[RMDB]
RNA sequence: GGGAACGACUCGAGUAGAGUCGAAAAGAAAAGAGCGUAAUCGCGUCUUGACGUGAGUGAGGCUAGACUGUAGCCUAUCCCAAGUGGGAUAGCAUAUCUCACAAUACGCUGAUCUACAGUCAAAAGACACUAUCCGACGAUUCGUCGUCGGAUAGUGAAAAGAAACAACAACAACAAC
Reactivity to 2A3 in 0.01 (KOAc 150mM, MgCl2 10mM, bicine 150mM(pH8.5), 24C), signal-to-noise 7, nucleotides 027 to 126: g160a010a070a010a010g050a000g000c000g000u020a060a020u060c000g000c000g030u000c090u120u230g130a020c010g020u020g010a030g000u050g010a010g030g010c040u050a060g020a020c000u010g010u030a000g020c010c010u000a010u020c000c000c010a120a110g260u300g040g000g000a000u000a010g030c040a040u040a050u110c010u000c000a010c000a000a020u040a020c020g000c010u030g020a070u020c010u010a010c000a000g000u010c000a070a000a050a000g090a010
Reactivity to DMS in 0.01 (KOAc 150mM, MgCl2 10mM, bicine 150mM(pH8.5), 24C), signal-to-noise 4, nucleotides 027 to 126: g030a030a070a120a050g020a080g000c020g030u000a030a270u000c000g020c030g000u000c030u010u020g010a040c040g000u000g000a040g020u000g010a030g000g040c110u010a060g000a010c010u020g010u020a010g000c300c020u000a000u000c000c000c010a270a150g040u050g010g000g000a000u000a020g010c300a120u010a080u000c010u010c000a000c020a120a150u000a010c010g040c000u000g010a030u010c050u000a000c000a010g000u000c020a130a050a150a050g000a180
Notes:
Structure probing data (2A3 and DMS) for a 177-nucleotide construct. For 2A3 the reverse transcriptase was SuperScript II with manganese. The 2A3 profile rests on 10,025 reads. DMS adducts were read by reverse transcription with MarathonRT.